[RMDB]
RNA sequence: GGGAACGACUCGAGUAGAGUCGAAAAUGUCGGGAAGGUGACGCUCUGCGAGUUCGUAGUCGGCAUCGUCGUGGAGGACUACUAGGCCCCUGGCCGCCGCAGUGUCGCAGAUCAGCAGAUCGACAACUGUAUGUCACGGAUUCGUCCGUGACAUACAAAAAGAAACAACAACAACAAC
Reactivity to DMS in 0.01 (KOAc 150mM, MgCl2 10mM, bicine 150mM(pH8.5), 24C), signal-to-noise 3, nucleotides 027 to 126: u010g030u000c030g010g000g000a260a200g000g010u000g010a120c140g040c130u010c020u010g000c000g020a070g000u010u010c070g020u000a060g000u010c010g020g010c040a070u000c200g020u000c140g020u010g000g000a120g020g010a040c030u000a070c210u010a070g020g010c020c000c070c050u000g000g020c020c090g010c040c000g010c030a080g010u000g000u000c030g020c080a040g000a080u000c040a130g010c070a070g000a300u020c010g010a060c030a070a140c270
Reactivity to 2A3 in 0.01 (KOAc 150mM, MgCl2 10mM, bicine 150mM(pH8.5), 24C), signal-to-noise 1, nucleotides 027 to 126: u080g030u010c000g000g050g000a030a080g070g000u010g010a060c070g030c050u020c010u020g010c010g020a070g150u120u120c060g040u090a040g030u200c010g040g040c040a090u050c060g100u010c030g000u040g040g080a260g070g000a070c010u100a110c020u060a130g070g000c000c000c000c010u030g010g020c040c020g020c000c010g000c030a060g020u070g000u010c020g010c040a020g010a090u030c010a000g110c000a000g050a050u020c010g010a000c010a030a050c050

Background:
An RNA of 177 nucleotides, treated with DMS and 2A3 and read out base by base. High DMS reactivity at an A or C suggests that its Watson-Crick edge is free. The RNA was probed in 150 mM KOAc, 10 mM MgCl2 and 150 mM bicine (pH 8.5) at 24 C. 2A3 adducts were read by reverse transcription with SuperScript II with manganese. Values cover nucleotides 27 to 126. Source: RMDB library OK2TRN, as collected in RNAgym. The 2A3 profile rests on 1,670 reads. For DMS, 2,180 sequencing reads were counted.